Structure probing data (2A3 and DMS) for a 177-nucleotide construct. DMS adducts were read by reverse transcription with MarathonRT.
RNA sequence: GGGAACGACUCGAGUAGAGUCGAAAAGGCGCAUCGUGGCGGUGAUGCUGUUAUUAUGCGGGGCCGUCGCUGCGCUGCCGCUGGUGCAUGCGCGGCGGCUGUCGGCCGCGGACCGGCGCACCCGGGCCGUGGUGUGCUCCUUCGGGAGCACACCACGAAAAGAAACAACAACAACAAC
Reactivity to 2A3 in 0.01 (KOAc 150mM, MgCl2 10mM, bicine 150mM(pH8.5), 24C), signal-to-noise 1, nucleotides 027 to 126: g030g000c030g000c040a120u110c110g030u030g050g070c050g000g070u050g000a060u090g000c050u020g080u160u060a200u140u040a110u200g020c010g050g000g040g000c000c000g000u000c000g020c020u000g010c000g020c000u010g010c000c000g010c210u280g150g130u280g020c050a100u140g040c000g000c070g030g010c010g010g000c070u050g040u030c010g100g050c010c000g030c000g000g010a030c030c000g040g010c000g000c010a050c000c000c030g020g070g000c040
Reactivity to DMS in 0.01 (KOAc 150mM, MgCl2 10mM, bicine 150mM(pH8.5), 24C), signal-to-noise 1, nucleotides 027 to 126: g010g020c030g030c010a030u000c060g030u000g000g010c030g030g010u010g020a230u010g040c000u000g010u000u010a080u020u010a060u000g010c030g010g000g030g020c000c020g020u000c040g020c000u000g000c010g020c000u000g010c020c010g000c220u010g000g010u010g020c010a050u000g000c000g030c010g010g000c010g020g020c000u000g010u000c060g020g020c000c010g010c020g000g010a120c090c050g010g010c060g000c130a130c000c000c090g010g010g020c170
Reactivities are given for positions 27 through 126. It was measured as part of the RMDB library OK2TST. For DMS, 1,864 sequencing reads were counted. The reactions ran in a buffer of 150 mM KOAc, 10 mM MgCl2 and 150 mM bicine (pH 8.5), at 24 C.